Chemical mapping of a 177-nucleotide RNA with DMS and 2A3. The RNA was probed in 150 mM KOAc, 10 mM MgCl2 and 150 mM bicine (pH 8.5) at 24 C. High DMS reactivity at an A or C suggests that its Watson-Crick edge is free. The DMS profile rests on 3,102 reads. It was measured as part of the RMDB library TTRDEL.
RNA sequence: GGGAACGACUCGAGUAGAGUCGAAAAGAUAUGGAAUGGAGCAACAGCCACUGGGUCGGAAACGACCCGUGGACAUGCUCCUUCCUAAGUCAAAACAGUUUUAGCGACUUCGGUCGCUAAAACUGAACCUUCUUCACUAGUUCGCUAGUGAAGAAGGAAAAGAAACAACAACAACAAC
Reactivity to DMS in 0.01 (KOAc 150mM, MgCl2 10mM, bicine 150mM(pH8.5), 24C), signal-to-noise 3, nucleotides 027 to 126: g000a010u010a300u010g010g000a020a020u010g000g010a010g010c010a020a060c280a200g010c010c000a020c000u010g040g010g000u000c010g010g000a110a070a160c020g010a020c000c000c000g010u000g000g020a040c050a130u000g000c000u000c000c010u000u000c000c010u010a030a060g000u010c020a060a080a130a180c020a010g020u000u000u000u000a000g000c000g010a010c000u000u020c200g020g010u010c000g010c000u000a000a000a020a020c000u000g000a040a090
Reactivity to 2A3 in 0.01 (KOAc 150mM, MgCl2 10mM, bicine 150mM(pH8.5), 24C), signal-to-noise 3, nucleotides 027 to 126: g010a020u060a030u110g000g030a020a090u300g020g010a000g000c000a020a170c070a180g100c010c030a010c170u210g000g000g000u000c000g010g000a050a040a020c010g000a010c020c010c000g000u010g000g020a030c000a000u040g000c000u000c000c010u000u020c000c000u010a020a020g040u010c020a000a010a110a180c000a010g000u000u000u010u010a010g000c000g030a020c000u100u070c300g050g000u000c040g050c000u000a000a000a000a000c010u000g000a010a010